[RMDB]
RNA sequence: GGGAACGACUCGAGUAGAGUCGAAAAUAAAAUUAUGGGGUGGAAAUAAUGAAAAUCACAGUAAACGAUAAAAACGAAGUUAUCGGAUUCGUUAAUACUGGCGGUUUACGCAAUAGUUUAGAUGUAGGUAUGCUUCGAUUUUCGAAUCGAAGCAUACAAAAGAAACAACAACAACAAC
Reactivity to DMS in 0.01 (KOAc 150mM, MgCl2 10mM, bicine 150mM(pH8.5), 24C), signal-to-noise 1, nucleotides 027 to 126: u020a110a130a120a060u000u000a040u000g020g010g000g020u000g020g010a110a090a040u000a090a040u010g000a040a040a040a020u000c020a030c030a000g000u000a000a070a020c020g000a050u000a030a090a030a050a100c040g020a060a140g030u050u000a050u000c040g060g010a150u010u000c010g010u010u000a010a100u000a000c000u000g020g000c110g020g000u020u000u020a050c210g000c090a090a080u000a040g000u000u000u000a090g000a030u000g020u070a070g020

The record gives the reactivity of an RNA of 177 nucleotides to DMS. For DMS the reverse transcriptase was MarathonRT.